[RMDB]
RNA sequence: GGGAACGACUCGAGUAGAGUCGAAAAUGAUUGACCUGGUUGAUGAUUAGUCCCGCACCGCGUGAGGCAGGAAACUGAGCAGCGAAAAGGGGCAGCUGCGGACGGCACAAGGAUCGCAUGCUUGAGGAACAAGUACUCUGUUCGCAGAGUACUUGUUAAAAGAAACAACAACAACAAC
Reactivity to DMS in 0.01 (KOAc 150mM, MgCl2 10mM, bicine 150mM(pH8.5), 24C), signal-to-noise 8, nucleotides 027 to 126: u010g000a070u020u020g010a100c030c020u010g030g010u010u000g000a060u000g000a080u010u010a090g010u010c000c010c020g010c130a170c080c060g020c050g010u020g020a140g000g010c040a040g000g000a090a090a120c060u000g000a090g000c010a130g000c030g000a030a050a120a130g000g000g000g030c050a090g010c020u010g020c040g000g010a060c060g000g010c090a050c100a080a120g010g000a090u010c030g020c050a080u010g000c020u000u000g000a120g000g000
Reactivity to 2A3 in 0.01 (KOAc 150mM, MgCl2 10mM, bicine 150mM(pH8.5), 24C), signal-to-noise 4, nucleotides 027 to 126: u200g030a050u030u130g080a070c000c020u040g080g000u070u050g040a220u000g030a100u060u100a060g040u030c010c010c010g000c020a050c010c030g030c030g070u080g060a050g000g050c020a010g020g040a060a010a000c020u020g010a020g060c010a000g000c030g030a030a020a050a090g010g000g000g010c020a020g000c010u030g000c000g020g010a030c010g010g020c050a020c000a120a020g070g020a070u010c020g010c030a010u090g030c030u060u050g040a060g020g050